[RMDB]
RNA sequence: GGGAACGACUCGAGUAGAGUCGAAAACGGCAUCCGCGACAACGACCGUGCGCUGAUCGCGGUGGGCAUCGCCGUGUUGGCGCUGCGCGCGCUGGUGUUGCCCUGGCUGCUGGCCCGCGCGGUGGGCCCGACCCUCAUGAUUCGUCAUGAGGGUCGGAAAAGAAACAACAACAACAAC
Reactivity to DMS in 0.01 (KOAc 150mM, MgCl2 10mM, bicine 150mM(pH8.5), 24C), signal-to-noise 2, nucleotides 027 to 126: c040g010g000c020a110u030c020c000g010c020g000a040c030a030a070c020g010a080c030c030g000u010g000c010g010c040u010g000a110u000c020g010c000g020g020u000g020g000g010c070a060u000c030g010c000c010g020u010g030u030u030g000g020c000g010c020u010g010c060g000c070g020c290g000c010u000g000g020u000g010u010u010g000c000c000c030u010g000g020c060u010g010c020u010g010g010c000c020c010g000c050g010c050g000g030u000g010g000g000c030
Reactivity to 2A3 in 0.01 (KOAc 150mM, MgCl2 10mM, bicine 150mM(pH8.5), 24C), signal-to-noise 7, nucleotides 027 to 126: c010g020g000c010a040u020c000c000g010c000g020a020c010a090a030c030g080a070c020c020g040u060g010c010g010c030u050g070a300u040c010g000c010g000g020u060g000g030g020c040a040u070c020g010c010c000g070u060g100u140u230g050g000c010g000c050u090g010c060g030c040g010c000g000c120u080g010g020u050g030u070u060g000c010c000c010u040g100g010c010u020g000c020u030g040g030c000c000c010g000c000g000c010g020g030u060g030g030g010c000